Notes: Conditions: 150 mM KOAc, 10 mM MgCl2 and 150 mM bicine (pH 8.5), 24 C. Structure probing data (2A3 and DMS) for a 177-nucleotide construct. Reactivities are given for positions 27 through 126. For 2A3, 12,787 sequencing reads were counted.
[RMDB]
RNA sequence: GGGAACGACUCGAGUAGAGUCGAAAAGGACCACUGGACAGGGGUACUGCCUUUUCGGGGCAGCUGUCCGGUCAAGGCCAUACGGACAGCCGGGUCCACUGCCGAGAAAAACAAAACAAAAAGAAAACGAGAAGUUGCAGUUCGCUGCAGCUUCUCGAAAAGAAACAACAACAACAAC
Reactivity to 2A3 in 0.01 (KOAc 150mM, MgCl2 10mM, bicine 150mM(pH8.5), 24C), signal-to-noise 8, nucleotides 027 to 126: g020g000a020c000c000a010c010u020g010g000a000c010a010g020g030g050g100u160a150c000u010g000c000c000u060u090u100u170c120g060g000g000g000c000a010g000c000u000g000u000c000c000g000g000u020c030a020a050g020g000c010c000a060u080a090c020g010g020a010c010a010g000c000c000g020g000g000u000c010c000a000c020u040g000c000c010g050a080g150a030a100a020a000a000c100a030a080a030a010c110a030a080a070a040a010g180a060a070a010a020
Reactivity to DMS in 0.01 (KOAc 150mM, MgCl2 10mM, bicine 150mM(pH8.5), 24C), signal-to-noise 5, nucleotides 027 to 126: g000g000a020c000c010a080c020u000g000g010a020c020a010g020g040g030g020u040a300c020u010g000c010c000u000u030u040u050c300g010g000g000g000c000a010g000c000u000g000u000c010c000g000g040u010c220a080a020g010g020c020c000a090u010a080c000g000g000a040c010a080g000c000c000g000g000g020u000c010c010a130c190u070g000c000c000g000a300g000a040a020a070a050a090c190a080a030a080a140c230a080a080a070a100a140g010a100a090a100a200